[RMDB]
RNA sequence: GGGAACGACUCGAGUAGAGUCGAAAAAGUAUCGGGUUCGCCCGAUACUGUUGGCGCGCGGCCUUUCUCCUGUCGCGCGUAUAUUGCGCGCGAUAUACGCGCAUGUGGGGUCGUUCGCGACCCCAAAGAUUCAAUACUUAUUCGUAAGUAUUGAAUCAAAAGAAACAACAACAACAAC
Reactivity to 2A3 in 0.01 (KOAc 150mM, MgCl2 10mM, bicine 150mM(pH8.5), 24C), signal-to-noise 7, nucleotides 027 to 126: a010g010u000a000u000c000g010g020g030u040u060c180g070c030c000c000g000a000u000a000c000u000g010u010u100g050g010c030g010c000g010c010g030g120c020c010u040u060u020c060u020c010c020u080g050u100c050g000c000g000c010g010u000a010u000a010u010u140g010c020g000c010g000c010g010a010u010a010u020a080c000g010c010g070c030a030u120g080u080g100g010g010g000u000c010g020u040u050c180g010c020g120a000c000c000c000c000a000a010a010
Reactivity to DMS in 0.01 (KOAc 150mM, MgCl2 10mM, bicine 150mM(pH8.5), 24C), signal-to-noise 7, nucleotides 027 to 126: a010g010u000a000u000c000g010g010g010u000u020c250g020c000c000c000g010a000u000a000c000u000g010u000u000g000g010c040g000c010g010c010g010g000c070c060u010u000u000c040u010c020c230u000g000u010c070g020c000g010c000g020u000a010u010a040u000u000g010c000g000c020g010c010g000a050u000a020u000a040c010g010c000g010c040a070u000g010u010g000g010g010g010u000c000g020u000u010c180g020c010g010a010c000c000c000c000a000a020a050

Record summary:
Structure probing data (2A3 and DMS) for a 177-nucleotide construct. The RNA was probed in 150 mM KOAc, 10 mM MgCl2 and 150 mM bicine (pH 8.5) at 24 C. 2A3 adducts were read by reverse transcription with SuperScript II with manganese. Source: RMDB library M2PK50, as collected in RNAgym.